[RMDB]
This 177-nucleotide RNA was probed chemically with 2A3 and DMS. 2A3 adducts were read by reverse transcription with SuperScript II with manganese. For 2A3, 1,103 sequencing reads were counted. The data come from the RNA Mapping Database (RMDB), library OK1LIB. Reactivities are given for positions 27 through 126.
RNA sequence: GGGAACGACUCGAGUAGAGUCGAAAAGGAACUAGUGAUGGGGGUACCUUCGACAUGGAGACAGCACAGAAAUUGGCAGAGGAGUAUGGGUGCAUCGAUGUCAUUUAUCACCAAUCGAAAGGAGCUCGCACAUGUCACGUUUCGACGUGACAUGUGCAAAAGAAACAACAACAACAAC
Reactivity to 2A3 in 0.01 (KOAc 150mM, MgCl2 10mM, bicine 150mM(pH8.5), 24C), signal-to-noise 2, nucleotides 027 to 126: g020g030a040a000c020u020a070g000u030g170a090u080g000g000g000g050g000u040a060c000c000u050u000c080g040a040c040a110u130g010g020a040g040a110c030a020g080c000a030c000a060g130a050a210a110u090u090g080g000c020a060g010a020g110g050a020g070u180a070u160g050g020g050u110g070c000a040u060c000g070a000u050g050u030c020a080u010u020u110a040u070c020a000c000c030a010a080u010c050g050a100a020a050g070g000a030g000c030u020c050
Reactivity to DMS in 0.01 (KOAc 150mM, MgCl2 10mM, bicine 150mM(pH8.5), 24C), signal-to-noise 1, nucleotides 027 to 126: g050g020a070a180c050u050a010g000u050g020a230u000g000g000g000g000g110u000a060c010c050u050u000c050g030a070c000a020u050g050g040a010g000a060c150a120g010c150a000c060a170g000a030a030a120u040u040g000g000c050a050g000a040g020g050a090g000u000a050u030g000g010g040u010g000c000a100u000c020g010a060u010g010u010c130a090u000u030u050a120u030c060a040c070c020a020a090u000c010g000a090a150a070g000g000a280g000c060u000c150